[RMDB]
RNA sequence: GGGAACGACUCGAGUAGAGUCGAAAAGAUAUGGACCUGGCUCGAGGCGUUUGACGUUCAUCGGAAACGAUGAACCGAGCUACCCACCGAGUCCAGGUCCUAAGUCAAAGCACGGUUCGCCGUGCAAUCAAAAGACUCAGUUCGCUGAGUCUUUUGAAAAAGAAACAACAACAACAAC
Reactivity to 2A3 in 0.01 (KOAc 150mM, MgCl2 10mM, bicine 150mM(pH8.5), 24C), signal-to-noise 2, nucleotides 027 to 126: g010a010u080a050u150g010g000a010c000c000u000g000g000c010u020c010g050a050g030g020c110g040u080u070u160g030a030c050g000u020u000c020a000u000c010g010g060a100a090a060c010g000a000u000g010a000a000c010c010g010a020g000c050u070a170c010c000c040a130c100c020g020a000g030u070c050c010a000g000g000u010c010c000u000a000a000g000u000c000a050a000a030g030c000a010c000g040g000u040u060c190g060c110c000g000u010g000c000a000a020
Reactivity to DMS in 0.01 (KOAc 150mM, MgCl2 10mM, bicine 150mM(pH8.5), 24C), signal-to-noise 6, nucleotides 027 to 126: g010a070u000a300u010g000g000a000c000c000u000g010g020c000u000c000g010a120g020g030c300g010u000u010u010g010a220c300g000u000u000c000a010u000c010g000g000a090a090a190c010g020a010u000g000a000a010c020c020g000a090g010c060u000a050c060c030c050a290c150c000g000a010g000u010c000c000a010g010g010u000c010c010u000a000a060g000u000c040a120a100a140g000c000a010c000g000g020u000u010c260g010c000c000g010u000g010c010a030a040

The record gives the reactivity of an RNA of 177 nucleotides to 2A3 and DMS. Reactivities are rounded to 0.1 and cut off at 0 and 3. For DMS, 5,689 sequencing reads were counted. For 2A3 the reverse transcriptase was SuperScript II with manganese. The reactions ran in a buffer of 150 mM KOAc, 10 mM MgCl2 and 150 mM bicine (pH 8.5), at 24 C.